[RMDB]
RNA sequence: GGGAACGACUCGAGUAGAGUCGAAAAACCCAGUGGAACCAUGGGAUGCCCUUCCCGAUUCCGAACCCAUCCCUUCCCCCGAGGGUCCGCCCAGGAAUGGAACCCACUCAGUUGGGGUCCGCGUUCCGUUCUUUACAACGUUCGCGUUGUAAAGAACAAAAGAAACAACAACAACAAC
Reactivity to DMS in 0.01 (KOAc 150mM, MgCl2 10mM, bicine 150mM(pH8.5), 24C), signal-to-noise 2, nucleotides 027 to 126: a060c010c010c010a160g010u000g000g000a040a050c030c040a150u000g000g000g000a090u000g000c050c030c050u000u000c000c010c020g000a120u020u010c030c040g010a100a100c060c010c010a110u020c020c030c010u000u000c030c010c000c020c030g020a110g000g000g010u000c050c150g000c050c020c040a170g000g010a030a060u010g000g010a040a020c000c000c020a010c040u010c100a160g010u010u010g030g010g010g010u000c020c010g010c120g000u000u010c010c020
Annotation:
An RNA of 177 nucleotides, treated with DMS and read out base by base. DMS adducts were read by reverse transcription with MarathonRT. Reactivities are given for positions 27 through 126.